An RNA of 170 nucleotides, treated with DMS and 2A3 and read out base by base.
2A3 adducts were read by reverse transcription with SuperScript II with manganese.
It was measured as part of the RMDB library 15KLIB.
The 2A3 profile rests on 3,741 reads.

[RMDB]
RNA sequence: GGGAACGACUCGAGUAGAGUCGAAAACACUUUGAUCAAAAUAGCGAAGUGCUUAAGGCUAUCUUAGUGAAGUAUGGUUGCUGUGAUGUUACCUACUUUGAAAAUAAACUCUGGUUUGAUUUUGUUGAAAGUUAAACGUUCGCGUUUAACAAAAGAAACAACAACAACAAC
Reactivity to DMS in 0.01 (KOAc 150mM, MgCl2 10mM, bicine 150mM(pH8.5), 24C), signal-to-noise 3, nucleotides 027 to 129: c060a050c060u020u050u000g040a060u050c170a210a080a150a080u040a000g000c080g060a030a110g030u050g010c080u050u000a080a170g010g050c000u040a010u040c050u000u000a070g040u010g000a090a040g010u000a060u060g070g020u030u040g030c000u000g000u080g040a110u050g040u030u020a050c040c050u030a070c040u040u000u070g010a100a080a080a060u040a040a040a020c090u060c060u000g040g000u020u010u000g030a120u000u000u000u000g010u000u000g040a080a060a130
Reactivity to 2A3 in 0.01 (KOAc 150mM, MgCl2 10mM, bicine 150mM(pH8.5), 24C), signal-to-noise 5, nucleotides 027 to 129: c020a000c000u050u010u020g030a050u140c160a060a100a100a140u160a070g010c030g040a020a010g050u030g070c070u110u120a080a040g080g000c000u020a100u110c020u070u060a040g090u140g150a030a000g010u000a050u290g030g020u020u010g000c020u030g080u120g130a070u130g030u040u000a020c020c000u010a010c000u020u040u050g070a060a060a040a000u200a070a130a010c040u040c040u080g010g040u080u010u060g210a180u020u100u060u110g020u000u000g010a000a000a000